[RMDB]
RNA sequence: GGGAACGACUCGAGUAGAGUCGAAAACCAUCGUUUCGACGAUGGAAAAAAGCGUACUACAUAGGAGGUUUGCAGUCGAUAAGUCCCAAAUAGGACUUUUGACGACUGUAAACUACCCACCCUAUGUAUCGCAAAAAGUGACGGUUCGCCGUCACAAGAUAACGGGAGGUUUCGACCUCCCGUUAUCAAAAGAAACAACAACAACAAC
Reactivity to 2A3 in 0.01 (KOAc 150mM, MgCl2 10mM, bicine 150mM(pH8.5), 24C), signal-to-noise 2, nucleotides 027 to 156: c000c000a010u010c000g010u000u060u180c230g030a020c010g000a020u070g000g000a040a120a050a000a020a000g030c020g010u060a080c050u000a000c070a000u010a020g010g000a020g000g000u000u000u000g010c000a000g000u000c000g050a030u000a110a000g010u020c020c020c020a140a220a040u220a030g000g000a010c000u020u050u100u170g300a260c040g000a000c000u000g000u000a000a000a000c000u000a000c000c020c000a050c010c020c000u030a010u000g000u000a000u300c010g000c000a000a000a000a170a030g000u010g000a000c000g010g050u060u050c200g040c100c000g000u000c000a000c000a000a040
Reactivity to DMS in 0.01 (KOAc 150mM, MgCl2 10mM, bicine 150mM(pH8.5), 24C), signal-to-noise 1, nucleotides 027 to 156: c000c010a010u000c010g020u010u010u000c210g030a070c030g010a020u020g010g000a040a030a030a170a110a130g060c000g020u000a070c110u000a030c000a040u010a010g000g000a190g020g000u000u000u000g000c000a000g000u000c000g070a200u000a020a030g010u000c000c000c020a040a080a220u000a050g010g140a020c000u000u000u000u000g020a300c120g010a010c000u010g010u000a000a000a040c010u000a030c030c030c040a300c150c020c010u010a020u010g000u010a010u000c000g000c020a070a070a030a080a150g010u000g000a000c020g060g000u010u000c130g020c000c000g020u000c000a020c010a030a230